Structure probing data (2A3 and DMS) for a 207-nucleotide construct. The reactions ran in a buffer of 150 mM KOAc, 10 mM MgCl2 and 150 mM bicine (pH 8.5), at 24 C.
RNA sequence: GGGAACGACUCGAGUAGAGUCGAAAAGGUCGGCAAUAAAUUCGCGAUUAAGCGCAUUUAAGUCGCGUUCUACGCGAUCGCGAUAGGGGCCAUUUACUACAUUACGUGCAGUGUAUUGACCGGAUCUAGGGCCGCAAUUUGCGCCACCACAUGCAUAAACAAACGAAGCAUUCGUGCUUCGUUUGUUAAAAGAAACAACAACAACAAC
Reactivity to 2A3 in 0.01 (KOAc 150mM, MgCl2 10mM, bicine 150mM(pH8.5), 24C), signal-to-noise 2, nucleotides 027 to 156: g030g000u040c000g030g020c020a030a020u010a030a110a120u100u040c020g000c010g070a070u090u140a240a070g000c000g010c040a080u040u130u260a180a030g020u060c010g020c020g010u020u010c050u130a070c060g000c070g040a010u010c010g020c020g000a010u070a050g090g000g000g000c000c000a000u000u080u040a050c020u000a030c000a060u090u060a030c020g050u090g030c040a040g020u000g000u120a090u050u030g030a080c020c000g000g000a000u010c030u080a050g000g070g000c120c010g010c060a020a070u100u060u230g000c000g010c020c000a040c000c020a030c010a070u100g020c010a070u110a100
Reactivity to DMS in 0.01 (KOAc 150mM, MgCl2 10mM, bicine 150mM(pH8.5), 24C), signal-to-noise 1, nucleotides 027 to 156: g000g020u000c050g000g020c020a120a110u000a070a090a270u050u000c030g040c000g020a150u010u010a070a120g010c040g030c030a090u020u000u010a090a170g030u030c050g030c110g020u000u010c070u030a100c040g000c000g050a020u000c010g030c020g010a070u000a050g050g010g000g010c000c010a100u000u010u000a050c020u010a020c020a060u000u000a100c090g060u000g010c020a080g040u000g010u010a040u010u000g050a140c000c000g030g040a110u000c060u010a120g040g020g000c000c030g050c070a060a030u000u000u000g030c080g040c010c000a040c010c000a070c070a200u000g020c060a090u010a140